The record gives the reactivity of an RNA of 207 nucleotides to 2A3 and DMS. The 2A3 profile rests on 2,920 reads. The data come from the RNA Mapping Database (RMDB), library ARCHII. For 2A3 the reverse transcriptase was SuperScript II with manganese. Conditions: 150 mM KOAc, 10 mM MgCl2 and 150 mM bicine (pH 8.5), 24 C. The DMS profile rests on 3,284 reads.
[RMDB]
RNA sequence: GGGAACGACUCGAGUAGAGUCGAAAAUCGGUAUCGAUAUGGUGCUCCUGGGGGAGCCUUGGACUACCAGGUCGUCUAAGGAGGGGUGAACCGGCCCAGGUCGGAGACGGAGCAGGUCAAAGCCCCCGUGCCGAUCAGUAGUGGGAUCGCGCCUGUGCGAUGAUGCUAAGUUCGCUUAGCAUCAUCGAAAAGAAACAACAACAACAAC
Reactivity to 2A3 in 0.01 (KOAc 150mM, MgCl2 10mM, bicine 150mM(pH8.5), 24C), signal-to-noise 2, nucleotides 027 to 156: u060c020g020g070u110a050u170c060g020a090u040a110u300g060g000u050g040c020u000c040c030u070g000g000g010g020g050a050g010c000c010u000u020g010g000a010c000u050a090c050c040a020g040g070u030c040g000u000c040u020a000a030g000g000a050g000g020g000g000u030g060a050a050c020c000g020g000c000c000c010a020g000g010u010c020g010g000a090g000a050c020g020g010a070g040c070a030g020g070u110c120a080a010a110g000c010c010c000c000c000g010u020g000c000c000g000a010u020c000a010g180u250a030g030u080g020g040g010a070u040c010g000c010g000c050c000u060g030u050g060
Reactivity to DMS in 0.01 (KOAc 150mM, MgCl2 10mM, bicine 150mM(pH8.5), 24C), signal-to-noise 1, nucleotides 027 to 156: u000c030g010g060u000a110u020c030g030a140u000a000u000g020g030u000g020c030u000c010c020u010g020g010g030g030g040a170g000c010c000u000u000g010g000a080c030u000a050c060c080a080g040g030u000c060g020u010c030u010a150a060g010g000a150g000g020g030g010u000g020a080a080c010c010g010g020c030c020c020a080g020g010u000c040g000g000a120g010a050c010g000g010a090g000c060a100g050g010u000c120a100a150a260g010c030c000c010c010c000g030u000g010c010c010g020a030u000c020a150g010u010a120g020u000g010g000g010a070u000c000g010c020g000c040c010u010g020u080g000